[RMDB]
RNA sequence: GGGAACGACUCGAGUAGAGUCGAAAACUCAAUGUAGGGAAUAACAUUGAAUUGAUACAAAUACCUUUUUCGGUGUAGGGAAAAACACCGAAUUGAUACAAAUACCUUUCUCAUUGUAGGGAAUAACAAAACAGGCAUCGCUUCGGCGAUGCCUGAACUUAUUAGUAUUGUUCGCAAUACUAAUAAGAAAAGAAACAACAACAACAAC
Reactivity to 2A3 in 0.01 (KOAc 150mM, MgCl2 10mM, bicine 150mM(pH8.5), 24C), signal-to-noise 4, nucleotides 027 to 156: c000u010c000a000a010u020g020u040a100g080g130g100a120a160u170a150a020c020a020u010u020g020a060a060u090u140g060a090u130a240c080a040a130a050u200a100c020c010u030u010u000u000u000c000g010g000u000g010u010a020g020g030g060a100a140a120a070a000c000a020c010c030g000a010a010u000u020g010a010u020a020c020a010a100a020u070a080c000c020u010u090u040c030u030c040a090u100u140g060u130a070g010g010g050a020a060u110a140a030c050a030a050a030a040c000a000g000g000c020a000u000c000g000c010u060u070c170g050g000c000g000a000u000g000c000c000u000g000a000a000
Reactivity to DMS in 0.01 (KOAc 150mM, MgCl2 10mM, bicine 150mM(pH8.5), 24C), signal-to-noise 1, nucleotides 027 to 156: c030u000c010a020a020u000g000u000a050g020g030g010a210a180u000a060a080c050a040u020u000g000a010a000u010u000g000a020u010a180c030a080a240a080u000a000c000c000u000u010u000u000u010c020g010g000u000g030u000a080g020g020g010a140a070a220a190a020c000a010c010c010g000a020a010u010u000g000a100u000a000c050a020a190a050u000a040c020c010u010u010u030c020u000c030a190u000u010g050u000a110g000g010g000a050a090u000a090a140c040a040a040a070a090c000a020g000g000c000a050u010c000g000c020u010u010c300g030g000c060g030a020u000g000c000c010u010g000a010a030

This 207-nucleotide RNA was probed chemically with 2A3 and DMS. The data come from the RNA Mapping Database (RMDB), library M2RFPK. The 2A3 profile rests on 3,272 reads.